The record gives the reactivity of an RNA of 177 nucleotides to 2A3.
Values cover nucleotides 27 to 126.

RNA sequence: GGGAACGACUCGAGUAGAGUCGAAAAUUCCUUUUUAUUGAUUUUUCCUUUUCUUUCCUUGGUUUAGUUUAUUUAUGAUAAGUUAUUGCAAGAAAGGAUAGGAAAAAGACUGAUGAGUGUCGUAGAUCUCUACUCUAGACUUCGGUCUAGAGUAGAGAAAAGAAACAACAACAACAAC
Reactivity to 2A3 in 0.01 (KOAc 150mM, MgCl2 10mM, bicine 150mM(pH8.5), 24C), signal-to-noise 1, nucleotides 027 to 126: u020u000c010c040u000u050u050u040u130a210u060u120g030a000u000u000u000u020u000c000c000u000u000u000u020c030u020u010u020c040c040u020u110g120g100u300u030u000a000g010u000u000u000a090u120u000u070a260u300g000a000u000a020a000g020u040u000a000u050u060g030c000a010a010g020a010a070a000g000g000a000u020a000g000g000a000a000a000a000a000g080a030c020u060g080a080u140g080a130g160u060g030u090c000g010u030a000g000a130u040

The 2A3 profile rests on 534 reads. Conditions: 150 mM KOAc, 10 mM MgCl2 and 150 mM bicine (pH 8.5), 24 C.